RNA sequence: GGGAACGACUCGAGUAGAGUCGAAAAGAUGGGCGUGACCGGCAGGUUCUGCGCGAAGUUAAGCUGCCAGCGGGUGUAGAGCGCCUUGCGCUUGCCCACAUCGGGCGUGGUCGAAGCGUCGUCGAAGUCGUAGUGUAGACUUCGGUCUACACUACGAAAAAGAAACAACAACAACAAC
Reactivity to 2A3 in 0.01 (KOAc 150mM, MgCl2 10mM, bicine 150mM(pH8.5), 24C), signal-to-noise 3, nucleotides 027 to 126: g040a050u130g030g030g020c040g030u080g040a070c020c040g050g010c020a020g030g130u180u050c040u080g020c040g010c030g060a040a010g010u080u100a100a000g050c010u030g000c020c010a050g020c100g050g050g000u050g070u180a140g030a030g080c030g020c020c000u010u110g010c030g000c030u020u070g020c010c050c000a020c010a120u130c070g050g020g000c020g030u030g010g030u030c010g030a100a010g010c000g030u010c030g020u010c040g030a050a030g080
Reactivity to DMS in 0.01 (KOAc 150mM, MgCl2 10mM, bicine 150mM(pH8.5), 24C), signal-to-noise 5, nucleotides 027 to 126: g000a090u000g000g010g020c030g020u000g010a070c060c020g020g020c060a050g010g000u000u020c070u000g020c040g020c080g000a090a070g010u020u010a060a090g010c040u000g010c010c030a130g030c070g000g000g010u000g000u000a090g000a120g000c030g010c020c090u000u010g020c030g000c020u000u000g010c090c000c020a070c160a090u010c110g000g000g020c040g010u010g000g000u000c060g000a110a120g000c020g010u010c080g000u000c040g000a100a090g010

Description:
An RNA of 177 nucleotides, treated with 2A3 and DMS and read out base by base. Source: RMDB library OK2TST, as collected in RNAgym. For DMS, 6,185 sequencing reads were counted. 2A3 adducts were read by reverse transcription with SuperScript II with manganese.